Chemical mapping of a 177-nucleotide RNA with 2A3 and DMS. Values cover nucleotides 27 to 126. 2A3 adducts were read by reverse transcription with SuperScript II with manganese. It was measured as part of the RMDB library TTRDES. The reactions ran in a buffer of 150 mM KOAc, 10 mM MgCl2 and 150 mM bicine (pH 8.5), at 24 C. DMS (dimethyl sulfate) methylates the pairing face of unpaired adenines and cytosines.

RNA sequence: GGGAACGACUCGAGUAGAGUCGAAAAGAUAUGGACCGUGAAAGGGAGCUGUCAGUCGGAAACGACUGCAGCGCGAAACCUUCACGGUCCUAAGUCAAAGUUGAAUGAUGUUCGCAUCAUUCAACAAGGUUACACCAGAGUUCGCUCUGGUGUAACCAAAAGAAACAACAACAACAAC
Reactivity to 2A3 in 0.01 (KOAc 150mM, MgCl2 10mM, bicine 150mM(pH8.5), 24C), signal-to-noise 2, nucleotides 027 to 126: g010a010u000a000u030g010g010a000c000c010g030u010g050a150a120a170g090g170g120a170g040c010u050g300u300c070a000g030u000c000g000g010a020a020a010c020g000a010c000u000g000c020a000g010c020g030c040g080a300a220a150c000c000u000u000c010a000c010g000g020u050c000c000u000a010a000g000u000c000a000a020a050g020u010u000g000a010a000u010g000a000u000g030u120u140c300g000c120a020u020c000a000u000u010c000a000a000c010a010a040
Reactivity to DMS in 0.01 (KOAc 150mM, MgCl2 10mM, bicine 150mM(pH8.5), 24C), signal-to-noise 1, nucleotides 027 to 126: g010a010u000a000u020g000g000a010c000c010g010u010g000a010a020a040g020g010g020a300g000c000u000g000u020c040a010g020u000c000g050g010a010a000a020c000g000a050c000u000g000c020a010g020c010g020c300g000a130a170a120c000c000u000u000c000a010c010g010g000u000c000c000u000a000a040g000u000c010a140a090a200g040u000u010g000a020a020u000g000a020u000g010u000u010c300g010c010a010u010c000a010u000u000c000a000a000c000a130a090